[RMDB]
RNA sequence: GGGAACGACUCGAGUAGAGUCGAAAAGAUAUGGAAUGCAGGCUAGCUCGUCGGAAACGAUAGAGCUUGGACCCUGAUAUUCCUAAGUCAAAAGAGAUGUCAAUACCUUCGGGUAUUGACAUCUCAACACUUUCUCCUUCUUCGGAAGGAGAAAGUGAAAAGAAACAACAACAACAAC
Reactivity to DMS in 0.01 (KOAc 150mM, MgCl2 10mM, bicine 150mM(pH8.5), 24C), signal-to-noise 2, nucleotides 027 to 126: g020a050u000a300u010g010g020a030a000u010g000c000a000g020g010c010u000a000g000c000u000c000g010u000c000g010g010a090a110a240c010g010a030u010a110g000a000g010c010u000u020g020g010a130c300c030c000u000g000a100u020a010u000u000c000c000u000a030a110g010u010c040a050a090a120a090g000a030g000a020u000g000u000c000a000a000u010a000c000c000u000u010c210g010g000g000u000a000u000u000g000a000c000a000u000c000u000c000a020a100
Reactivity to 2A3 in 0.01 (KOAc 150mM, MgCl2 10mM, bicine 150mM(pH8.5), 24C), signal-to-noise 1, nucleotides 027 to 126: g020a010u030a050u070g000g000a000a000u010g000c000a000g030g010c010u020a000g000c020u000c010g020u010c000g010g100a090a020a030c000g020a010u150a300g000a060g010c000u030u050g000g050a060c050c010c000u010g050a090u020a000u100u000c010c000u010a110a020g030u040c030a040a000a100a110g000a000g010a000u000g000u010c010a010a000u000a010c010c000u070u130c300g050g000g080u000a000u000u000g020a000c000a000u000c000u000c010a000a000